[RMDB]
RNA sequence: GGGAACGACUCGAGUAGAGUCGAAAAGGGAAGGCAUCCGACCUUGUUACAGAGAGCGUCAAUGUCAAUAUUAUAACCUUGGUCGGUGACAUACGCUUACUUGUUUUCUAAUGCUGUGGAUAGGAAGAGUCAGUGCGUGAUUCGUCACGCACUGACUAAAAGAAACAACAACAACAAC
Reactivity to DMS in 0.01 (KOAc 150mM, MgCl2 10mM, bicine 150mM(pH8.5), 24C), signal-to-noise 1, nucleotides 027 to 126: g020g000g030a180a080g030g000c070a030u010c010c010g020a150c030c010u000u000g030u030u000a050c090a120g010a300g030a030g000c050g010u010c140a080a020u000g000u000c010a120a070u030a120u020u020a130u000a190a110c070c040u000u000g000g040u010c110g000g040u000g000a010c020a000u000a040c030g020c020u000u000a140c080u020u000g010u000u000u000u000c020u020a070a090u000g020c020u000g010u010g010g000a070u000a150g010g030a180a110g000